[RMDB]
Source: RMDB library OK1LIB, as collected in RNAgym.
This 177-nucleotide RNA was probed chemically with 2A3 and DMS.
In probing experiments dimethyl sulfate is read out at A N1 and C N3, which are open when not base-paired.
Values cover nucleotides 27 to 126.
The RNA was probed in 150 mM KOAc, 10 mM MgCl2 and 150 mM bicine (pH 8.5) at 24 C.
For 2A3, 654 sequencing reads were counted.
High 2A3 reactivity points to a flexible backbone, as in loops and unpaired stretches.
RNA sequence: GGGAACGACUCGAGUAGAGUCGAAAAAACGACAACAUAUGGAAUGGCUGUUACCCUUGGCAUACCUGAGGCCGAUUGGCCCCGAUUGGUAAGGGACCUUACUGAUGAGAGAGGCAACAGGCGUCUCCCGUUAAACCCACUUCGGUGGGUUUAACGGAAAAGAAACAACAACAACAAC
Reactivity to 2A3 in 0.01 (KOAc 150mM, MgCl2 10mM, bicine 150mM(pH8.5), 24C), signal-to-noise 2, nucleotides 027 to 126: a000a000c060g150a080c000a090a000c020a070u110a020u130g060g070a210a000u030g240g000c000u030g020u060u070a010c000c000c010u000u030g000g000c040a160u100a090c000c020u000g000a070g090g110c010c010g230a300u100u270g080g000c000c000c010c000g050a060u000u020g000g120u020a000a000g050g050g010a020c120c000u030u040a040c020u050g050a070u090g020a140g030a040g000a050g080g000c030a050a050c000a040g030g030c000g100u020c120u020c000
Reactivity to DMS in 0.01 (KOAc 150mM, MgCl2 10mM, bicine 150mM(pH8.5), 24C), signal-to-noise 1, nucleotides 027 to 126: a020a020c170g010a050c100a090a040c070a120u040a080u010g060g000a050a000u010g020g020c140u000g000u000u010a080c000c000c000u000u020g000g000c000a070u190a050c040c010u000g000a030g000g040c000c000g000a070u030u010g020g000c030c020c050c030g000a110u000u000g010g020u000a070a110g000g030g000a080c110c000u060u000a090c030u000g020a080u010g000a230g000a110g020a200g010g000c060a050a020c090a140g050g000c060g000u000c030u000c030